RNA sequence: GGGAACGACUCGAGUAGAGUCGAAAAGGGGUCUCCUACGCGACGAUUAUUGGGACUUGGAUUUAUGGAGCUGAAGCCUCCACGGCUCCAUUGUCAGUCCAGGAUCGUCCUGUAGGAGACGGAGGCACCCAAAGCUUGCGUAGUUCGCUACGCAAGCCAAAUCUCGUACGUUCGCGUACGAGAUUUGAAAAGAAACAACAACAACAAC
Reactivity to 2A3 in 0.01 (KOAc 150mM, MgCl2 10mM, bicine 150mM(pH8.5), 24C), signal-to-noise 5, nucleotides 027 to 156: g130g010g020g000u010c000u000c010c010u000a010c010g050c050g010a000c000g000a010u030u060a140u300u300g150g020g000a050c090u130u260g160g010a090u190u300u150a020u080g000g010a000g000c000u010g020a110a000g040c010c020u030c010c010a000c000g010g000c000u020c010c010a000u000u010g010u020c140a070g020u020c000c000a020g050g040a000u010c000g010u000c010c010u020g000u000a000g000g030a000g000a000c000g000g000a000g000g010c020a070c000c000c000a070a060a010g000c000u010u010g010c000g000u000a010g020u090u120c220g010c170u000a000c000g000c000a000a000g000c000
Reactivity to DMS in 0.01 (KOAc 150mM, MgCl2 10mM, bicine 150mM(pH8.5), 24C), signal-to-noise 2, nucleotides 027 to 156: g000g010g020g020u010c000u010c010c000u000a010c000g020c190g010a020c010g000a030u000u000a170u000u000g040g000g030a050c060u010u010g040g010a070u000u000u000a010u000g010g000a030g010c000u010g010a080a110g000c090c020u010c010c020a300c040g010g000c020u000c000c010a020u010u000g010u000c030a150g020u000c010c000a180g000g010a030u000c020g030u000c010c030u010g010u000a000g010g010a000g010a000c010g000g020a030g040g030c020a160c010c000c010a070a130a160g020c000u000u010g030c000g030u000a030g030u000u020c300g040c010u010a010c000g000c000a010a000g020c000